[RMDB]
RNA sequence: GGGAACGACUCGAGUAGAGUCGAAAAGACUUCCUCCAGGAGGGUUCACAUCCCCAACCCGCGGGCCGGCUACUCUUCUUUCCCUUCUCUCGUCUUCCUCGGUCAACCUCCUGAGUUCCUCUUCUUCGAUAGAGUCAUUCUUCGGAAUGACUCUAUCAAAAGAAACAACAACAACAAC
Reactivity to DMS in 0.01 (KOAc 150mM, MgCl2 10mM, bicine 150mM(pH8.5), 24C), signal-to-noise 2, nucleotides 027 to 126: g000a140c120u010u010c040c010u000c050c110a070g020g000a070g020g020g020u000u010c120a080c140a170u010c020c000c010c040a110a100c070c040c040g030c080g010g010g000c050c050g030g000c060u000a050c070u000c040u020u010c020u020u000u000c020c010c010u010u010c040u010c010u010c060g000u010c010u010u000c060c020u000c040g020g020u010c050a050a130c050c010u000c020c000u000g010a150g020u000u000c010c010u000c220u000u000c030u010u000c300